Description: Chemical mapping of a 177-nucleotide RNA with DMS and 2A3. For DMS the reverse transcriptase was MarathonRT.

[RMDB]
RNA sequence: GGGAACGACUCGAGUAGAGUCGAAAACAGCGUCUACGAUUUACGCAAACUAUAUGCAAGAUACAUGCUAGAGAAUGAGACAGAUUAUCAUAUAGAGUCAAGGUCAAUUUCUACGCAGACUGAAUAAGAAAAAGAUAUCCUUCGGGAUAUCUUUUUCAAAAGAAACAACAACAACAAC
Reactivity to DMS in 0.01 (KOAc 150mM, MgCl2 10mM, bicine 150mM(pH8.5), 24C), signal-to-noise 3, nucleotides 027 to 126: c130a070g020c060g030u000c030u010a060c090g000a130u000u000u010a060c180g010c050a110a040a150c150u010a060u000a050u010g010c120a110a140g010a120u020a060c080a080u000g040c020u000a090g000a030g000a060a030u000g010a300g000a020c020a080g000a110u010u010a110u000c050a160u030a100u000a080g010a040g000u010c040a050a090g010g010u000c010a050a080u010u010u000c020u000a080c150g010c030a030g010a060c090u010g010a050a060u020a080a130
Reactivity to 2A3 in 0.01 (KOAc 150mM, MgCl2 10mM, bicine 150mM(pH8.5), 24C), signal-to-noise 1, nucleotides 027 to 126: c050a020g000c000g000u050c060u140a100c140g100a170u100u170u090a020c040g000c040a030a060a010c070u100a030u080a030u300g070c020a030a050g020a050u110a040c110a090u060g000c010u040a040g020a010g020a220a060u070g000a060g020a040c010a020g060a050u090u090a070u170c040a020u190a080u070a220g070a000g100u050c040a100a090g190g000u010c000a000a020u020u050u000c040u050a050c040g000c000a010g000a030c000u050g090a050a030u200a160a090
The 2A3 profile rests on 926 reads.
The DMS profile rests on 1,882 reads.
For 2A3 the reverse transcriptase was SuperScript II with manganese.
The reactions ran in a buffer of 150 mM KOAc, 10 mM MgCl2 and 150 mM bicine (pH 8.5), at 24 C.